[RMDB]
RNA sequence: GGGAACGACUCGAGUAGAGUCGAAAAACAACGAGCCUGCUCUAUUAGCAGCUUAAUUAGAAUAAAAUCUUAGGCUCCUUCUUAGAUAUAUUAUCUCUAGAUGUAUCAAUAGAAGUCAAAAUUAGAGAUCGCGAUAUGAACGGGCUUGUACGUUCCUCUAUGCAAACUACUUCGGUAGUUUGCAUAGAAAAGAAACAACAACAACAAC
Reactivity to 2A3 in 0.01 (KOAc 150mM, MgCl2 10mM, bicine 150mM(pH8.5), 24C), signal-to-noise 2, nucleotides 027 to 156: a000c070a010a040c020g020a000g000c000c000u020g000c000u000c010u010a050u030u090a040g040c060a000g000c000u040u050a070a070u120u060a050g040a080a060u120a160a190a100a080u090c040u050u040a010g000g050c010u030c030c000u010u000c000u030u040a010g010a010u000a010u020a010u150u040a110u080c130u010c030u180a080g000a040u010g000u020a010u040c030a040a100u010a160g010a010a000g020u060c020a070a100a050a120u130u050a020g020a010g040a150u060c080g000c010g040a030u020a010u180g010a010a030c000g000g000g000c000u040u010g020u050a040c050g000u000u030c000c000u020
This 207-nucleotide RNA was probed chemically with 2A3. 2A3 adducts were read by reverse transcription with SuperScript II with manganese. It was measured as part of the RMDB library RSTRND. The 2A3 profile rests on 956 reads.